[RMDB]
RNA sequence: GGGAACGACUCGAGUAGAGUCGAAAAUGUGCAGUACAGUACGGUACACGAUCCUAGACUCGUCAUGCACGCUAGCUGCCAUGGAUCUCUAGGUACCGACGAUCUGGAUCGAUCUACAGGAUCGAUCGUGUGAUGUAUAGUUCGCUAUACAUCACACAAAAGAAACAACAACAACAAC
Reactivity to DMS in 0.01 (KOAc 150mM, MgCl2 10mM, bicine 150mM(pH8.5), 24C), signal-to-noise 9, nucleotides 027 to 126: u010g020u000g010c020a040g010u000a150c150a120g010u000a100c030g010g010u000a020c030a120c130g000a060u000c030c010u000a080g010a080c130u000c110g010u010c050a090u000g010c060a040c050g010c170u010a070g010c130u000g010c090c080a090u000g010g000a060u000c060u000c110u000a060g010g010u000a050c010c020g000a060c080g010a110u000c040u000g010g010a010u000c000g000a010u000c000u010a100c300a120g000g000a010u000c000g000a000u000c020
Reactivity to 2A3 in 0.01 (KOAc 150mM, MgCl2 10mM, bicine 150mM(pH8.5), 24C), signal-to-noise 9, nucleotides 027 to 126: u140g030u060g030c020a010g030u080a120c030a050g030u070a130c060g010g010u020a010c080a020c070g030a020u020c000c010u030a050g030a100c050u030c080g080u070c080a090u160g020c070a010c060g040c080u080a040g010c040u040g050c050c030a060u060g020g000a030u020c020u010c060u140a060g110g000u020a020c010c010g010a010c020g020a070u020c020u070g050g000a000u000c000g000a000u000c010u080a160c090a220g180g040a000u000c000g000a000u010c020
Chemical mapping of a 177-nucleotide RNA with DMS and 2A3. For DMS the reverse transcriptase was MarathonRT. For DMS, 45,532 sequencing reads were counted. It was measured as part of the RMDB library OK2TRN. The RNA was probed in 150 mM KOAc, 10 mM MgCl2 and 150 mM bicine (pH 8.5) at 24 C.